The data come from the RNA Mapping Database (RMDB), library OK3TST. The record gives the reactivity of an RNA of 207 nucleotides to 2A3 and DMS. The 2A3 profile rests on 2,717 reads. The RNA was probed in 150 mM KOAc, 10 mM MgCl2 and 150 mM bicine (pH 8.5) at 24 C.
[RMDB]
RNA sequence: GGGAACGACUCGAGUAGAGUCGAAAAAAAAUGCUAAGAGAUCCUGGUGAGAAGAAGGUGGGAGUAGCUGCAGGAGACGUUAUACUUUCACUUGCCUUAAGUUUAAUUGCAUCAAAGAUGAAUCCGCAGAUGCGAUGUCAAUUCGAGGCAGAGAGUAAGAUCUAGAACAGUUCGCUGUUCUAGAUCUAAAAGAAACAACAACAACAAC
Reactivity to 2A3 in 0.01 (KOAc 150mM, MgCl2 10mM, bicine 150mM(pH8.5), 24C), signal-to-noise 4, nucleotides 027 to 156: a000a010a000a020u120g000c070u110a120a010g030a010g010a070u030c010c010u040g020g030u080g040a060g010a090a040g040a060a020g050g010u050g020g000g020a040g020u070a020g000c030u050g020c040a010g020g040a040g010a010c010g010u050u060a060u020a080c010u020u040u050c050a090c070u060u090g000c010c000u030u030a050a010g030u040u020u080a000a020u010u030g000c000a000u010c020a010a090a040g090a060u160g120a130a150u120c100c050g040c110a010g010a010u010g000c010g000a000u000g100u150c040a030a050u090u030c060g010a000g020g000c030a000g000a000g000a000g030u040a040
Reactivity to DMS in 0.01 (KOAc 150mM, MgCl2 10mM, bicine 150mM(pH8.5), 24C), signal-to-noise 3, nucleotides 027 to 156: a060a060a070a030u010g000c060u000a130a120g010a120g000a040u000c010c000u010g030g030u000g010a110g000a070a090g000a120a060g010g010u000g010g050g000a120g010u000a040g010c010u010g010c070a110g010g000a100g010a080c060g020u010u000a150u000a020c010u020u000u010c030a040c070u010u000g010c010c010u010u000a020a050g020u010u000u000a130a060u000u000g020c000a050u000c010a070a080a060g010a110u000g020a120a110u010c030c030g030c160a300g000a020u000g000c030g020a020u000g000u000c210a010a070u010u000c010g020a010g030g010c010a090g010a050g020a060g020u000a110